[RMDB]
RNA sequence: GGGAACGACUCGAGUAGAGUCGAAAAACAUACGUUGGGCCAUAGGCGCUGCGGUUCAUCAUCUUGCCCUCGCCAGGACCGCUCCCGUUCUACUACUUGGCGUCGCGGAUACCGGGUUGGAAAACAAUGGGAUAAUGUUGUUCGCAACAUUAUCCCAAAAAGAAACAACAACAACAAC
Reactivity to DMS in 0.01 (KOAc 150mM, MgCl2 10mM, bicine 150mM(pH8.5), 24C), signal-to-noise 1, nucleotides 027 to 126: a070c080a180u000a130c080g010u000u000g010g000g000c020c040a110u000a120g000g000c000g000c070u000g030c120g040g000u010u010c050a090u010c100a040u010c060u010u030g000c050c000c010u000c030g030c070c010a120g000g000a020c030c070g000c040u000c000c010c010g010u000u000c060u000a130c140u000a100c080u000u000g000g010c030g030u000c050g010c040g000g000a090u010a100c070c020g010g010g010u000u020g000g000a050a130a010a050c230a060a160